[RMDB]
RNA sequence: GGGAACGACUCGAGUAGAGUCGAAAAAUGGCGAAUGCCUGGGGAACUACAUCUGUGUCGCGAGUUCGAUUCUCGCCAGGGCCUGGUCCUGUAGCUCAGUUGGUAGAGCAAGCUGUUCCCCGGACACAAAAUCCAGCUAGGUUCGCCUAGCUGGAAAGUUCUGACAAACGUUCGCGUUUGUCAGAACAAAAGAAACAACAACAACAAC
Reactivity to 2A3 in 0.01 (KOAc 150mM, MgCl2 10mM, bicine 150mM(pH8.5), 24C), signal-to-noise 1, nucleotides 027 to 156: a010u140g030g010c040g180a110a040u130g010c010c010u010g010g000g000g000a010a020c020u090a100c030a220u180c080u110g090u050g070u140c020g010c020g010a000g020u000u010c020g000a000u000u040c000u000c020g030c020c010a000g000g010g020c030c130u190g080g050u040c010c020u000g030u030a010g000c000u000c000a040g010u270u220g110g150u210a020g000a000g000c010a030a000g040c040u050g000u010u000c000c000c000c000g000g000a010c020a000c010a010a120a000a020u070c010c000a010g000c010u010a000g040g000u050u070c080g020c020c000u000a000g000c000u000g000g000a000a000a000